[RMDB]
RNA sequence: GGGAACGACUCGAGUAGAGUCGAAAAGCGGCCGUCUACGACAUCGCGGUUGCGCGUCGGCGCCGACCCGCUUGAGCGGUCCCCGACGCGUCAACGUCGCGCCGGCUGCCCGGUAAACCGGCAAUCGUUACCGUCAAAUAUUCGUAUUUGACGGUAAAAAAGAAACAACAACAACAAC
Reactivity to DMS in 0.01 (KOAc 150mM, MgCl2 10mM, bicine 150mM(pH8.5), 24C), signal-to-noise 9, nucleotides 027 to 126: g010c010g000g010c000c000g000u010c050u010a200c070g010a060c050a100u030c170g010c130g020g000u000u000g000c030g000c020g010u000c010g000g000c240g020c190c130g010a040c080c030c070g010c110u020u050g010a140g020c050g000g010u000c010c040c000c000g000a010c000g010c000g000u050c020a010a010c020g000u010c000g010c300g000c230c020g000g000c010u000g010c000c000c000g000g000u050a040a070a130c030c010g000g010c170a090a070u040c120g010
Reactivity to 2A3 in 0.01 (KOAc 150mM, MgCl2 10mM, bicine 150mM(pH8.5), 24C), signal-to-noise 9, nucleotides 027 to 126: g010c000g000g010c010c000g020u050c060u160a100c060g080a030c020a130u160c090g020c040g130g010u010u010g000c000g000c000g000u000c000g000g040c070g040c110c060g030a050c060c080c010g020c060u200u290g060a050g050c040g000g000u040c000c000c000c000g000a000c000g000c000g020u060c040a010a000c020g090u080c000g000c010g000c000c010g000g010c010u010g000c000c000c000g010g020u130a120a100a090c020c000g000g000c040a020a090u070c050g050
The record gives the reactivity of an RNA of 177 nucleotides to DMS and 2A3. Conditions: 150 mM KOAc, 10 mM MgCl2 and 150 mM bicine (pH 8.5), 24 C. 2A3 adducts were read by reverse transcription with SuperScript II with manganese. Reactivities are given for positions 27 through 126. The data come from the RNA Mapping Database (RMDB), libraries RFM100 and RFMREP.